[RMDB]
RNA sequence: GGGAACGACUCGAGUAGAGUCGAAAAUAGGGCAGCUGUCAGCAGUGCAGGAAGCUGACUAUUAAGGGGAAACAAAAGUGUUAUUAGGAGUCCUGCUGUCACAGUGGUUUGAGCAUCCUGAGCCCUGUUUGCAUCGAGGAUUCGUCCUCGAUGCAAAAAAAGAAACAACAACAACAAC
Reactivity to DMS in 0.01 (KOAc 150mM, MgCl2 10mM, bicine 150mM(pH8.5), 24C), signal-to-noise 3, nucleotides 027 to 126: u030a060g000g010g010c010a090g000c080u000g000u000c050a040g020c030a060g010u030g010c090a070g010g000a080a120g000c020u020g040a040c020u000a070u010u030a090a100g000g000g030g000a080a110a070c080a060a080a100a110g000u030g010u010u010a090u000u010a100g000g000a080g020u020c020c010u010g000c010u010g000u040c180a030c040a080g010u010g010g000u010u000u000g000a140g000c100a080u010c040c000u010g000a180g000c000c010c000u010g020
Reactivity to 2A3 in 0.01 (KOAc 150mM, MgCl2 10mM, bicine 150mM(pH8.5), 24C), signal-to-noise 1, nucleotides 027 to 126: u060a000g150g000g010c030a070g000c000u070g000u000c000a000g020c000a010g100u000g170c020a000g100g000a020a030g110c000u000g040a010c000u000a020u070u080a040a010g000g040g000g010a150a100a000c010a000a120a060a020g160u150g020u210u160a110u140u070a040g080g090a050g000u000c000c000u000g000c020u000g090u060c010a010c020a030g090u070g100g160u080u100u080g030a000g000c030a030u000c000c000u010g000a000g000c000c040c020u000g060
Structure probing data (DMS and 2A3) for a 177-nucleotide construct. Conditions: 150 mM KOAc, 10 mM MgCl2 and 150 mM bicine (pH 8.5), 24 C. The 2A3 profile rests on 617 reads. As a SHAPE reagent, 2A3 marks flexible, mostly unpaired nucleotides at the ribose 2'-OH. Source: RMDB libraries RFM100 and RFMREP, as collected in RNAgym. Reactivities are rounded to 0.1 and cut off at 0 and 3.